[RMDB]
RNA sequence: GGGAACGACUCGAGUAGAGUCGAAAAGAAAGAAAGAAAGAACUCUGUAAAGUGAGGGAUUGCCAGGACCAGGUCGGCGGGCCUGCUCCAGUUUCCUUCGCUCUGCUCAACGGGCAGACCGCCACAAAAAACGCGUGGCUGUUCGCAGCCACGCGAACAUGAAUUAUUAGUUCGCUAAUAAUUCAUGAAAAGAAACAACAACAACAAC
Reactivity to 2A3 in 0.01 (KOAc 150mM, MgCl2 10mM, bicine 150mM(pH8.5), 24C), signal-to-noise 2, nucleotides 027 to 156: g050a000a060a010g050a020a100a000g050a020a100a010g040a050a000c030u030c050u100g060u240a080a120a090g010u030g010a020g040g000g030a040u020u200g040c040c060a040g030g000a020c010c000a000g010g010u050c060g030g050c000g010g020g010c000c000u000g000c010u010c000c000a030g030u030u070u020c020c000u060u030c030g000c010u040c000u030g000c010u010c050a090a110c070g000g040g000c010a010g010a070c000c010g000c040c000a030c060a020a170a010a020a030a010c020g000c000g000u000g020g000c000u010g030u060u080c200g000c050a030g000c000c000a000c000g000c010g000a010a000
Chemical mapping of a 207-nucleotide RNA with 2A3. It was measured as part of the RMDB library M2RFPK. The 2A3 profile rests on 1,246 reads. Conditions: 150 mM KOAc, 10 mM MgCl2 and 150 mM bicine (pH 8.5), 24 C.